Conditions: 150 mM KOAc, 10 mM MgCl2 and 150 mM bicine (pH 8.5), 24 C. Structure probing data (DMS and 2A3) for a 207-nucleotide construct.

[RMDB]
RNA sequence: GGGAACGACUCGAGUAGAGUCGAAAACAUUUUACGAUCACAAUUUCCGUACGAGCUAGUAAACGUUGUGUAUAUGGCUCUUUUGAAAAGUUCCCCUAUUGAAGUUCGACAUUUGGUAAAAUCUUCUUUUGACAACAUAUUUUCGUACAUAUUUUCAAGUACUAAUAUGGUUCGCCAUAUUAGUACUAAAAGAAACAACAACAACAAC
Reactivity to DMS in 0.01 (KOAc 150mM, MgCl2 10mM, bicine 150mM(pH8.5), 24C), signal-to-noise 2, nucleotides 027 to 156: c030a090u000u000u000u000a080c060g020a170u010c060a110c060a040a140u000u000u000c040c070g010u000a090c100g020a070g050c080u000a130g010u000a060a080a140c100g010u010u010g010u010g020u000a130u010a080u010g000g040c010u000c010u020u010u000u000g000a030a070a120a210g010u000u000c000c000c000c110u000a070u000u000g010a080a130g000u010u000c050g030a140c070a100u000u010u010g020g010u010a030a040a090a050u010c040u010u010c020u000u000u000u000g010a070c060a040a070c070a080u020a080u000u000u020u000c050g010u000a050c070a100u000a140u000u000u000u020c050a170
Reactivity to 2A3 in 0.01 (KOAc 150mM, MgCl2 10mM, bicine 150mM(pH8.5), 24C), signal-to-noise 4, nucleotides 027 to 156: c020a030u130u130u150u210a080c110g040a070u110c060a000c020a120a080u040u170u120c060c050g030u040a030c060g000a030g070c110u170a040g030u150a130a070a020c040g020u040u070g000u030g040u040a030u010a050u240g020g000c000u000c000u010u030u020u050g020a020a030a010a000g000u000u000c000c000c000c000u020a050u090u040g030a040a010g020u030u100c040g050a020c080a130u070u110u240g080g020u130a070a080a060a090u020c010u020u010c000u060u080u020u080g080a080c050a070a010c020a120u160a070u070u140u070u070c040g030u060a030c030a090u160a140u100u090u040u090c040a030

It was measured as part of the RMDB library OK3TST.